[RMDB]
An RNA of 177 nucleotides, treated with 2A3 and DMS and read out base by base. The DMS profile rests on 1,411 reads. The 2A3 profile rests on 2,297 reads.

RNA sequence: GGGAACGACUCGAGUAGAGUCGAAAAGAUAUGGAUCAUCCCAGAACUACAACCUAUAUCGGAAACGAUAUAGAGUUGCUGGGAGUGAUCCUAAGUCAAAACCUUGUGGAGUUCGCUCCACAAGGAAUCUAAUACUGGCGUUCGCGCCAGUAUUAGAAAAAGAAACAACAACAACAAC
Reactivity to 2A3 in 0.01 (KOAc 150mM, MgCl2 10mM, bicine 150mM(pH8.5), 24C), signal-to-noise 2, nucleotides 027 to 126: g000a000u020a020u060g000g000a000u010c000a000u020c000c010c000a000g040a210a300c300u300a110c050a020a000c000c000u000a010u000a010u000c000g000g040a020a000a020c010g000a000u020a010u000a020g040a050g000u040u020g130c000u000g010g000g000a110g150u080g000a000u000c010c010u000a050a000g010u000c030a060a070a100a270c000c010u010u010g000u000g000g040a050g000u050u120c210g180c140u000c000c020a000c000a000a000g000g000a000a000
Reactivity to DMS in 0.01 (KOAc 150mM, MgCl2 10mM, bicine 150mM(pH8.5), 24C), signal-to-noise 2, nucleotides 027 to 126: g000a000u000a110u020g010g000a040u000c000a070u000c000c000c000a000g010a180a150c300u010a300c020a000a000c010c000u000a010u000a000u000c000g010g000a050a020a060c010g020a010u000a000u000a000g000a110g030u000u010g020c020u000g000g020g010a030g030u000g000a010u010c000c010u000a000a100g000u000c050a160a130a070a220c010c010u000u000g010u000g000g000a060g010u010u020c290g030c000u000c000c000a000c000a020a000g000g000a020a020

Annotation:
The reactions ran in a buffer of 150 mM KOAc, 10 mM MgCl2 and 150 mM bicine (pH 8.5), at 24 C. It was measured as part of the RMDB library TTRDES.